An RNA of 207 nucleotides, treated with 2A3 and read out base by base. Source: RMDB library M2RFOK, as collected in RNAgym. As a SHAPE reagent, 2A3 marks flexible, mostly unpaired nucleotides at the ribose 2'-OH. The RNA was probed in 150 mM KOAc, 10 mM MgCl2 and 150 mM bicine (pH 8.5) at 24 C.

[RMDB]
RNA sequence: GGGAACGACUCGAGUAGAGUCGAAAAACAGAACAAAGGAGUUUAAAUUAGAUUUGCAAACGGACGGUACUAAAUACCGUCACUUUUACGUCUAACUUAUCGUUAACUCUGCAAAAAGAAAACAAGAAAAACAAGCGUGAGUUCGCUCACGCUUGAACAACUCACUCAACUUCGGUUGAGUGAGUUGAAAAGAAACAACAACAACAAC
Reactivity to 2A3 in 0.01 (KOAc 150mM, MgCl2 10mM, bicine 150mM(pH8.5), 24C), signal-to-noise 2, nucleotides 027 to 156: a000c020a020g150a030a010c050a090a120a050g010g000a020g010u080u110u130a040a080a030u010u010a040g020a040u040u120u300g020c110a050a030a020c050g040g000a010c000g000g010u030a060c130u210a040a120a130u070a010c000c000g030u000c010a060c000u080u020u010u050a020c040g000u010c000u020a050a030c010u030u090a060u260c000g060u030u040a000a000c000u000c040u100g050c070a070a070a000a000a000g100a020a060a030a030c100a060a040g120a080a090a000a010a030c000a000a010g000c010g000u000g000a040g020u000u150c170g020c020u000c010a000c010g000c020u000u000g000a000a000